Chemical mapping of a 177-nucleotide RNA with 2A3 and DMS.
Values are in units of 0.01, from 0 to 300, in steps of 10.
RNA sequence: GGGAACGACUCGAGUAGAGUCGAAAAGACGCAGGGAUGGAUGUUUGGUUUAUAAAACCAAACCAAGCUGGUCGCAGAGGAAGGGAACAAAGAAGAUCCUUAAGGUUGACACCCUAGCUUGCAAAAAGGAGAAUUAGAGGUUCGCCUCUAAUUCUCCAAAAGAAACAACAACAACAAC
Reactivity to 2A3 in 0.01 (KOAc 150mM, MgCl2 10mM, bicine 150mM(pH8.5), 24C), signal-to-noise 3, nucleotides 027 to 126: g110a030c070g000c030a010g000g000g100a060u080g070g030a060u070g070u000u010u000g000g050u000u060u020a190u190a080a240a030a000c020c000a000a000a040c010c000a040a040g020c040u060g050g000u040c050g000c050a020g010a050g050g050a030a050g030g000g020a060a090c070a130a070a030g130a040a030g050a070u030c030c000u040u050a030a060g070g000u040u110g000a020c010a070c020c010c000u010a030g010c050u010u140g030c100a110a080a000a000a050
Reactivity to DMS in 0.01 (KOAc 150mM, MgCl2 10mM, bicine 150mM(pH8.5), 24C), signal-to-noise 3, nucleotides 027 to 126: g030a080c120g000c050a060g000g040g000a150u040g000g030a050u010g020u000u000u000g010g010u010u000u020a120u050a170a070a010a040c030c010a000a000a000c010c140a070a050g000c050u000g000g000u000c060g000c050a030g010a040g040g000a150a060g000g020g020a090a080c120a080a060a080g010a090a160g000a060u000c010c030u000u010a020a130g000g000u000u020g000a110c160a110c040c020c040u000a060g020c060u030u010g000c060a070a100a030a090a050
It was measured as part of the RMDB library OK1LIB. For 2A3, 1,633 sequencing reads were counted.